[RMDB]
RNA sequence: GGGAACGACUCGAGUAGAGUCGAAAAUUAAAUCGGAGCGGGAAUAAAGCGUGCUAAGCAUCAUCGUGAAUAUGAUUACAGCGCCUGCGAUGGCAUAUAACCGUAUUGCGGAUGGAGCGUCACGUGAAACAUACGAUAUCUUCGGAUAUCGUAUGUUAAAAGAAACAACAACAACAAC
Reactivity to DMS in 0.01 (KOAc 150mM, MgCl2 10mM, bicine 150mM(pH8.5), 24C), signal-to-noise 9, nucleotides 027 to 126: u020u030a040a080a080u020c060g010g000a080g010c040g000g000g010a090a060u020a060a090a160g000c040g020u000g010c070u010a060a100g020c040a050u000c020a020u000c020g030u010g010a050a030u010a020u010g010a060u000u000a040c080a060g010c170g020c010c010u000g000c240g010a090u020g010g010c020a060u010a060u010a030a040c040c010g020u000a020u000u010g010c050g000g000a040u000g010g000a040g010c020g000u010c020a020c040g010u010g000a110
Reactivity to 2A3 in 0.01 (KOAc 150mM, MgCl2 10mM, bicine 150mM(pH8.5), 24C), signal-to-noise 9, nucleotides 027 to 126: u050u020a020a010a030u100c040g030g000a040g030c040g010g030g070a020a110u110a150a110a010g030c010g010u010g010c040u080a110a020g010c010a090u040c000a010u010c010g040u030g160a040a010u050a010u050g040a020u020u040a030c040a060g040c030g010c120c000u030g020c040g040a050u140g010g000c010a020u060a010u010a100a020c020c010g010u020a030u020u060g020c040g050g050a030u020g020g020a030g010c020g050u060c020a010c030g030u040g050a060